[RMDB]
RNA sequence: GGGAACGACUCGAGUAGAGUCGAAAACUUUAAGUUCGCCGGAGGUUUGCAAGUUUGCUAUAAGGUUGUCAAUACAGACACGAUUGCAUCAGGUGGAGUUUAUAAUAGUCCAACCAUUGGAUUUGCCUCAAACUUUUCAUCAGCCCCUAUGAGCAUAGGAUCUUUUCUAAUUCGUUAGAAAAGAUCCAAAAGAAACAACAACAACAAC
Reactivity to DMS in 0.01 (KOAc 150mM, MgCl2 10mM, bicine 150mM(pH8.5), 24C), signal-to-noise 2, nucleotides 027 to 156: c080u000u000u010a020a110g000u010u000c020g050c000c000g040g000a130g030g020u000u000u000g050c030a110a130g000u000u000u000g090c040u000a210u010a090a130g030g020u000u010g010u000c040a100a150u000a090c080a060g000a050c040a120c070g000a120u000u000g020c040a120u000c030a100g020g010u000g010g010a090g010u000u000u000a060u000a050a100u000a110g010u030c010c000a050a130c090c090a230u000u010g010g030a060u000u000u010g020c050c090u010c030a020a020a040c050u000u020u000u000c060a070u010c040a120g000c050c000c010c050u010a070u000g000a130g010c020a070u010a160
Reactivity to 2A3 in 0.01 (KOAc 150mM, MgCl2 10mM, bicine 150mM(pH8.5), 24C), signal-to-noise 2, nucleotides 027 to 156: c020u080u120u120a090a010g040u010u050c060g020c050c040g090g030a050g040g050u090u120u160g010c000a030a020g020u080u110u050g060c050u090a080u050a270a050g110g000u080u050g000u000c040a080a090u090a260c080a040g030a020c010a000c050g110a090u010u120g010c020a040u000c030a030g040g010u010g020g030a040g010u010u100u010a100u040a110a080u070a020g030u010c020c000a050a050c050c010a100u040u130g000g020a040u040u030u110g010c000c010u000c000a000a020a090c000u050u060u160u130c040a090u030c060a060g010c020c000c020c000u030a130u120g030a010g040c030a040u070a060

Overview: The record gives the reactivity of an RNA of 207 nucleotides to DMS and 2A3. 2A3 adducts were read by reverse transcription with SuperScript II with manganese. The DMS profile rests on 3,086 reads. For DMS the reverse transcriptase was MarathonRT. For 2A3, 1,167 sequencing reads were counted.